Structure probing data (2A3 and DMS) for a 177-nucleotide construct. For DMS, 1,210 sequencing reads were counted. DMS (dimethyl sulfate) methylates the pairing face of unpaired adenines and cytosines. The 2A3 profile rests on 1,176 reads. Conditions: 150 mM KOAc, 10 mM MgCl2 and 150 mM bicine (pH 8.5), 24 C.

RNA sequence: GGGAACGACUCGAGUAGAGUCGAAAAAUUUCCGCGGCUCCCGCAGGGCGACGAUGCCGAGGCUGAACGUCGAGGAUGCCGGAUCGCGGUUAUACACCUACGCAUUGGAGCUGAUCGCCGGUAAACGGCAUUCGAUCGUAUUCGUACGAUCGAAUGCAAAAGAAACAACAACAACAAC
Reactivity to 2A3 in 0.01 (KOAc 150mM, MgCl2 10mM, bicine 150mM(pH8.5), 24C), signal-to-noise 1, nucleotides 027 to 126: a000u050u030u000c010c000g040c020g010g000c140u030c030c030c030g000c000a070g030g120g030c010g010a030c030g020a010u060g020c020c030g050a110g090g000c000u040g030a150a020c000g010u020c010g040a050g130g040a070u050g000c010c010g020g010a000u000c030g010c000g000g000u020u020a050u000a030c040a060c020c000u050a050c050g050c040a040u050u150g080g000a040g030c000u040g030a100u000c060g020c030c020g050g000u050a090a110a030c030g100
Reactivity to DMS in 0.01 (KOAc 150mM, MgCl2 10mM, bicine 150mM(pH8.5), 24C), signal-to-noise 2, nucleotides 027 to 126: a130u000u000u000c010c010g010c010g000g010c140u000c000c000c260g040c020a040g010g000g000c020g000a080c030g010a090u000g030c010c000g000a140g030g020c020u000g000a150a110c080g010u000c020g010a140g000g010a240u000g000c010c200g000g010a100u000c020g040c030g010g010u000u010a050u010a050c230a140c000c010u010a080c170g000c080a130u000u000g010g010a060g000c030u000g010a050u000c110g000c010c040g010g000u010a040a120a140c130g030